RNA sequence: GGGAACGACUCGAGUAGAGUCGAAAACUGAGCCACCAGAAUAUCGUGCAGCAAUUCACCAAGUUCGACGGUGUCGUGGGCUCGCCGCUCGAUCGGCUUGCGGAACAAGACAAUUCGCGCCCGCGUAGCAGGACUCAUUAUUCGUAAUGAGUCCUGCAAAAGAAACAACAACAACAAC
Reactivity to DMS in 0.01 (KOAc 150mM, MgCl2 10mM, bicine 150mM(pH8.5), 24C), signal-to-noise 2, nucleotides 027 to 126: c070u000g000a090g000c040c000a040c010c040a140g000a090a070u010a040u000c180g040u000g000c080a030g030c090a150a090u000u020c080a020c050c080a050a180g010u000u000c050g000a050c110g000g010u000g000u000c040g050u020g030g000g010c010u040c120g000c000c000g020c060u000c120g020a110u010c060g000g030c000u000u000g010c060g010g000a100a060c220a060a100g000a050c140a050a110u000u000c020g080c140g000c030c010c040g010c030g010u010a140
Reactivity to 2A3 in 0.01 (KOAc 150mM, MgCl2 10mM, bicine 150mM(pH8.5), 24C), signal-to-noise 2, nucleotides 027 to 126: c030u010g000a000g010c030c020a020c020c030a050g110a220a060u120a020u110c040g000u060g030c000a040g050c020a060a110u130u050c000a010c070c050a170a040g060u040u060c030g030a040c030g050g000u030g010u040c010g010u030g050g000g000c000u060c070g020c010c000g050c060u090c070g170a300u070c040g030g000c000u020u080g000c000g030g070a040a100c090a230a000g180a070c060a100a180u050u020c030g010c010g000c010c000c000g000c010g000u030a030